[RMDB]
RNA sequence: GGGAACGACUCGAGUAGAGUCGAAAAGCAACUUAGGAUUUUAGGCUCCCCGUGCGUGUCUCGAACCAUGCCGGGCCAGACCCACGGGGGCUGGCGGUCCCCGUGCGGUCAAAAUCAAACCGCUGGAAAAACAGUUCUAGCUUCGGCUAGAACUGAAGUCGGUAUUACAGUUCGCUGUAAUACCGACAAAAGAAACAACAACAACAAC
Reactivity to 2A3 in 0.01 (KOAc 150mM, MgCl2 10mM, bicine 150mM(pH8.5), 24C), signal-to-noise 2, nucleotides 027 to 156: g020c020a020a140c080u110u150a140g100g050a170u120u070u160u140a080g040g000c040u110c050c020c020c000g070u150g030c020g010u040g050u030c080u080c300g050a050a050c040c000a020u040g010c000c010g000g000g000c030c050a010g000a010c010c000c000a000c010g000g000g000g000g000c000u000g010g000c010g000g080u000c030c000c000c000g010u000g040c070g000g010u000c000a000a000a000a020u070c000a020a040a080c010c000g000c030u060g070g020a060a120a000a000a010c000a000g000u000u000c000u000a000g010c000u030u020c140g070g000c000u000a000g010a000a000c000u000g000a000a000